Notes:
An RNA of 177 nucleotides, treated with 2A3 and DMS and read out base by base. The RNA was probed in 150 mM KOAc, 10 mM MgCl2 and 150 mM bicine (pH 8.5) at 24 C. The 2A3 profile rests on 1,586 reads. For DMS, 2,297 sequencing reads were counted. Reactivities are given for positions 27 through 126. It was measured as part of the RMDB library OK2TST.

[RMDB]
RNA sequence: GGGAACGACUCGAGUAGAGUCGAAAAAGGAGUGCUUGGCAGAGGGCGUAAAUGGCUGUCACUCGACGAUCGUAACCGCUAGAAAGGGCAACGGCCUCUGUUGUGAUAGUGGUUAGGCGUCCGCCGAGCCUGCAUAGCGAUUCGUCGCUAUGCAGGCAAAAGAAACAACAACAACAAC
Reactivity to 2A3 in 0.01 (KOAc 150mM, MgCl2 10mM, bicine 150mM(pH8.5), 24C), signal-to-noise 2, nucleotides 027 to 126: a000g080g000a040g050u090g010c050u060u110g030g000c020a010g080a130g110g020g030c040g040u040a090a040a070u090g050g000c030u020g060u030c010a020c100u030c050g060a020c060g050a070u070c000g040u020a040a050c030c010g040c050u050a040g160a170a160a030g090g070g030c030a040a030c050g060g040c060c010u090c070u110g050u100u050g030u030g010a040u030a020g010u020g070g000u010u000a000g080g090c000g010u030c010c070g000c000c010g000a010
Reactivity to DMS in 0.01 (KOAc 150mM, MgCl2 10mM, bicine 150mM(pH8.5), 24C), signal-to-noise 2, nucleotides 027 to 126: a030g020g010a060g000u000g010c050u000u020g030g010c080a120g020a150g010g010g020c030g010u000a050a080a070u020g010g000c020u000g000u010c040a070c100u010c060g050a030c060g020a090u000c020g000u000a040a040c000c000g000c060u010a060g020a090a130a200g030g000g010c030a130a060c060g020g000c060c080u010c040u000g020u000u010g010u000g000a120u000a000g030u010g010g020u000u010a010g010g000c060g010u000c040c130g020c070c030g000a050